This 177-nucleotide RNA was probed chemically with DMS and 2A3. The 2A3 profile rests on 626 reads.

RNA sequence: GGGAACGACUCGAGUAGAGUCGAAAAUUAACACUAAACUGCGGACGAUCUCGACGUAGUCUGAACGAAUGUUGCACGAAAGUCUUUCGUCGUUGCUGCUUAUUUCAUUUUGUUCGGAUGAGUAGUAACCUAUGCACCGGUUCGCCGGUGCAUAGGUAAAAGAAACAACAACAACAAC
Reactivity to DMS in 0.01 (KOAc 150mM, MgCl2 10mM, bicine 150mM(pH8.5), 24C), signal-to-noise 1, nucleotides 027 to 126: u000u010a100a040c300a020c060u010a040a050a060c010u000g000c030g050g000a060c020g000a090u030c090u040c020g030a110c130g010u000a070g040u000c040u000g000a080a040c150g000a000a090u030g020u000u020g000c060a010c030g040a060a070a120g000u050c060u010u030u010c060g000u000c010g020u020u000g010c040u000g030c130u110u040a040u050u000u000c050a070u010u020u060u000g030u010u000c070g000g000a000u000g000a130g000u000a060g020u020a080
Reactivity to 2A3 in 0.01 (KOAc 150mM, MgCl2 10mM, bicine 150mM(pH8.5), 24C), signal-to-noise 2, nucleotides 027 to 126: u070u010a110a000c020a000c050u110a030a200a000c030u190g020c000g030g050a060c050g070a100u070c090u050c060g010a000c000g020u020a030g000u000c010u050g080a040a000c040g000a020a080u160g010u030u040g050c060a060c070g060a050a050a000g050u020c000u020u120u050c040g000u000c000g010u000u050g000c010u000g000c010u100u150a110u130u190u110c020a070u000u030u040u160g120u050u040c030g000g000a060u020g010a090g040u020a000g010u020a050
For DMS the reverse transcriptase was MarathonRT.
The reactions ran in a buffer of 150 mM KOAc, 10 mM MgCl2 and 150 mM bicine (pH 8.5), at 24 C.